[RMDB]
RNA sequence: GGGAACGACUCGAGUAGAGUCGAAAAAUAACAUUUGACAAACCUUAUGCAGCACUUUAUCCAUCUGUAGGGCCAGGGAUAUACUAUGACAAUAAAAUUAUCUUCCUUGGAUAUGGUGGGCUAGAACCAUACUGGCGUCAUUCGUGACGCCAGUAUGAAAAGAAACAACAACAACAAC
Reactivity to DMS in 0.01 (KOAc 150mM, MgCl2 10mM, bicine 150mM(pH8.5), 24C), signal-to-noise 1, nucleotides 027 to 126: a070u040a060a090c090a300u000u000u000g030a060c080a080a090a150c080c000u000u020a030u010g000c040a020g010c130a040c040u000u000u000a020u000c110c030a050u000c040u010g010u000a060g010g010g020c240c000a040g020g000g000a020u000a040u010a030c140u010a050u010g010a180c080a040a070u000a020a060a040a070u000u000a040u010c050u000u000c010c000u000u000g020g020a010u000a030u000g000g000u000g000g000g000c120u000a050g000a060a060c120
Reactivity to 2A3 in 0.01 (KOAc 150mM, MgCl2 10mM, bicine 150mM(pH8.5), 24C), signal-to-noise 1, nucleotides 027 to 126: a000u170a000a040c050a000u000u070u120g100a010c000a060a090a020c060c000u000u070a020u180g130c060a050g000c000a010c030u040u110u100a080u100c010c010a020u010c080u140g160u160a090g040g060g000c010c000a010g080g020g040a020u040a020u000a080c080u070a060u120g080a030c080a120a060u130a170a110a070a000u130u020a020u000c060u070u050c050c020u000u040g020g000a020u030a030u020g020g030u000g000g000g060c010u080a030g040a080a000c000